[RMDB]
RNA sequence: GGGAACGACUCGAGUAGAGUCGAAAAACAGUCAGUACGCUGACUGAGGGAAACGGGAGCCGGGCUUGGGAUAAGAGCCAUCCCAAGUCCAAGGCCAAGUAGGCUCUAGUGAUGGUACGCCAUCACAAAAACUGGUCUACCUUCGGGUAGACCAGAACAUUCGUCUUGUCUUCGGACAAGACGAAUGAAAAGAAACAACAACAACAAC
Reactivity to 2A3 in 0.01 (KOAc 150mM, MgCl2 10mM, bicine 150mM(pH8.5), 24C), signal-to-noise 2, nucleotides 027 to 156: a000c000a000g000u000c000a000g000u040a020c170g030c120u000g010a010c000u000g010a070g020g050g030a100a170a060c090g020g040g040a030g050c030c030g010g010g010c000u000u000g000g000g020a000u020a150a040g000a010g000c000c000a010u000c000c000c010a000a000g020u000c010c000a030a020g010g000c040c010a050a030g080u120a120g060g010c000u000c010u020a040g000u000g010a010u000g000g000u060a040c240g000c020c000a000u000c000a000c000a000a050a000a000a060c000u000g000g000u000c000u000a000c010c000u020u080c210g100g000g010u000a000g000a000c000c000a000g000a000a000